The record gives the reactivity of an RNA of 177 nucleotides to DMS and 2A3.
The DMS profile rests on 1,901 reads.
The RNA was probed in 150 mM KOAc, 10 mM MgCl2 and 150 mM bicine (pH 8.5) at 24 C.
RNA sequence: GGGAACGACUCGAGUAGAGUCGAAAAAUCCUGCCCUUCGGGGCAGGAUGCAGCUUCGCUCUUGAGAGCCCGACUUAAGAGGAAUCCCAACGCGCAGAAGCACUAUUUCUCAGUUCGCUGAGAAAAAACGUAACUUCAGAUUCGUCUGAAGUUACGUAAAAGAAACAACAACAACAAC
Reactivity to DMS in 0.01 (KOAc 150mM, MgCl2 10mM, bicine 150mM(pH8.5), 24C), signal-to-noise 2, nucleotides 027 to 126: a040u000c000c000u010g000c000c000c000u000u020c240g060g000g000g020c000a000g010g010a000u000g000c160a080g000c030u010u000c020g020c010u000c010u010u020g010a020g010a070g010c030c020c040g010a230c020u000u000a040a020g000a020g000g010a130a150u000c000c000c000a090a140c150g000c150g000c030a040g000a020a020g020c010a150c180u000a090u000u010u000c000u000c000a020g000u000u010c220g030c000u000g010a010g010a000a010a020a090a170
Reactivity to 2A3 in 0.01 (KOAc 150mM, MgCl2 10mM, bicine 150mM(pH8.5), 24C), signal-to-noise 2, nucleotides 027 to 126: a000u010c000c000u000g010c030c000c000u020u040c300g030g000g000g000c000a000g010g000a000u000g000c030a020g000c000u040u030c020g010c010u030c000u000u030g020a030g040a090g070c020c010c010g080a100c000u010u030a010a010g010a010g030g020a040a050u010c030c000c010a050a020c070g040c020g000c140a040g000a040a000g040c010a010c070u070a200u030u080u010c020u000c010a030g040u040u110c180g020c060u000g000a000g000a000a000a000a040a010